[RMDB]
RNA sequence: GGGAACGACUCGAGUAGAGUCGAAAAGAUAUGGAAUUUGCCGCUGAGCUUGGAUUUAUCUUGGGACUACCCAGUCGGAAACGACUGAACAGUCCCAAGAUUGUCAGCUCAUGCAAAUUCCUAAGUCCGUUCAGGAAUAGUUCGCUAUUCCUGAACGAAAAGAAACAACAACAACAAC
Reactivity to 2A3 in 0.01 (KOAc 150mM, MgCl2 10mM, bicine 150mM(pH8.5), 24C), signal-to-noise 2, nucleotides 027 to 126: g040a040u140a070u260g000g000a000a000u030u000u000g020c000c020g040c050u000g010a010g000c040u190u300g240g010a110u300u300u250a040u120c000u000u000g020g010g000a010c000u020a040c030c030c040a000g010u010c000g040g000a090a110a040c010g020a010c000u000g000a030a010c070a070g000u000c000c010c020a010a000g000a000u000u010g000u020c000a000g000c000u000c000a010u080g000c000a020a000a000u010u000c000c000u010a110a000g030u000c060
Reactivity to DMS in 0.01 (KOAc 150mM, MgCl2 10mM, bicine 150mM(pH8.5), 24C), signal-to-noise 2, nucleotides 027 to 126: g000a080u000a300u000g000g000a010a010u010u000u000g000c000c010g010c020u000g000a010g000c020u000u010g020g010a030u000u010u010a000u000c000u000u000g000g000g010a020c010u000a180c240c100c010a020g010u000c010g010g010a150a160a210c020g000a030c000u000g010a040a290c130a050g010u020c000c000c010a000a000g000a000u000u000g020u000c010a020g000c000u000c000a020u000g000c000a010a010a010u010u000c010c000u000a020a100g000u010c050